Structure probing data (2A3) for a 177-nucleotide construct. The data come from the RNA Mapping Database (RMDB), library OK1LIB.
[RMDB]
RNA sequence: GGGAACGACUCGAGUAGAGUCGAAAAGACUGCGUGCACUGGAGACGAUAUCGAGCCGGAAAUUAAUCGAUAAUGUCUCGUGUAGUGGAUACGAUCCGGCAAGUAUCGACUACAUGUGCUCGUAGGAGAUAGCCGCUCAGUUCGCUGAGCGGCUAUCAAAAGAAACAACAACAACAAC
Reactivity to 2A3 in 0.01 (KOAc 150mM, MgCl2 10mM, bicine 150mM(pH8.5), 24C), signal-to-noise 2, nucleotides 027 to 126: g040a020c000u000g000c000g000u000g000c040a000c030u050g060g000a000g010a010c000g010a050u000a000u110c030g000a000g000c000c040g010g150a020a040a050u290u150a110a170u150c000g020a000u010a050a120u140g020u010c010u000c020g070u120g030u020a030g040u030g080g000a000u010a000c000g000a010u000c000c010g020g000c100a080a000g000u000a000u000c030g070a010c000u000a000c000a010u120g000u000g000c020u000c000g000u000a000g000g000a090
The reactions ran in a buffer of 150 mM KOAc, 10 mM MgCl2 and 150 mM bicine (pH 8.5), at 24 C. 2A3 adducts were read by reverse transcription with SuperScript II with manganese.